About this RNA: This 177-nucleotide RNA was probed chemically with DMS and 2A3. The 2A3 profile rests on 595 reads. For 2A3 the reverse transcriptase was SuperScript II with manganese.
RNA sequence: GGGAACGACUCGAGUAGAGUCGAAAAUAGAAUUAAAAUUCAAACGCUUGUUGCUUUCGCCGUACAAGAAUUGUUGACCAUCACUAGCGAUAUUUUGAACAACGCUUCCUUUUGUAUCAUAGAAGUAUCUGUUAACAAAGUUCGCUUUGUUAACAGAAAAAGAAACAACAACAACAAC
Reactivity to DMS in 0.01 (KOAc 150mM, MgCl2 10mM, bicine 150mM(pH8.5), 24C), signal-to-noise 2, nucleotides 027 to 126: u000a150g010a060a060u000u000a070a120a100a260u010u000c020a100a110a100c120g020c060u000u000g000u000u000g000c090u000u000u000c040g030c080c090g000u000a070c130a060a130g010a040a050u000u020g020u000u010g000a090c060c020a040u000c060a090c090u000a040g020c010g020a080u000a040u000u000u010u000g010a060a090c120a070a070c130g000c100u000u000c020c060u000u000u020u000g000u000a050u010c040a060u000a080g000a100a110g010u000a060
Reactivity to 2A3 in 0.01 (KOAc 150mM, MgCl2 10mM, bicine 150mM(pH8.5), 24C), signal-to-noise 1, nucleotides 027 to 126: u020a000g060a030a010u230u190a120a030a030a140u050u080c010a060a040a120c000g050c060u050u030g010u010u020g030c020u020u200u090c000g030c040c030g000u010a020c020a050a000g040a150a060u160u100g080u020u020g030a060c000c010a000u090c000a010c060u090a050g060c030g020a030u010a070u190u160u050u040g060a060a020c030a050a030c060g000c010u000u090c000c000u140u300u050u120g070u020a120u180c020a050u100a130g030a090a010g210u130a060
The RNA was probed in 150 mM KOAc, 10 mM MgCl2 and 150 mM bicine (pH 8.5) at 24 C.